Structure probing data (DMS) for a 207-nucleotide construct. Source: RMDB library OK3TST, as collected in RNAgym. The RNA was probed in 150 mM KOAc, 10 mM MgCl2 and 150 mM bicine (pH 8.5) at 24 C. DMS adducts were read by reverse transcription with MarathonRT.
RNA sequence: GGGAACGACUCGAGUAGAGUCGAAAACACCCCCGAUCCCAAAGUGACGCGCAGAAUGACUGACAUUCUUCCAGCAUAUGAUUGACAAUGGAAACGGGCCUGAAAUUACCCAAAGAAUCGAGGGAUGGGGCUGCCCAUAUCGAUACCACAUCCGCAAUACUAAAUCGCAUUUCGAUGCGAUUUAGUAAAAAGAAACAACAACAACAAC
Reactivity to DMS in 0.01 (KOAc 150mM, MgCl2 10mM, bicine 150mM(pH8.5), 24C), signal-to-noise 2, nucleotides 027 to 156: c050a150c080c010c000c030c080g020a120u000c000c000c010a060a160a150g020u000g000a090c060g040c020g050c090a040g040a060a030u000g010a270c100u000g030a190c080a070u000u000c030u000u000c020c020a090g070c050a110u000a050u000g020a160u000u040g000a140c090a050a090u010g000g000a020a070a070c090g020g010g040c060c060u000g010a050a050a090u000u000a080c000c030c010a040a060a150g000a070a040u000c110g010a110g010g000g000a060u000g020g020g040g030c010u000g030c000c030c070a120u010a090u000c020g000a210u010a060c010c010a050c040a100u000c000c010g020c040a000a300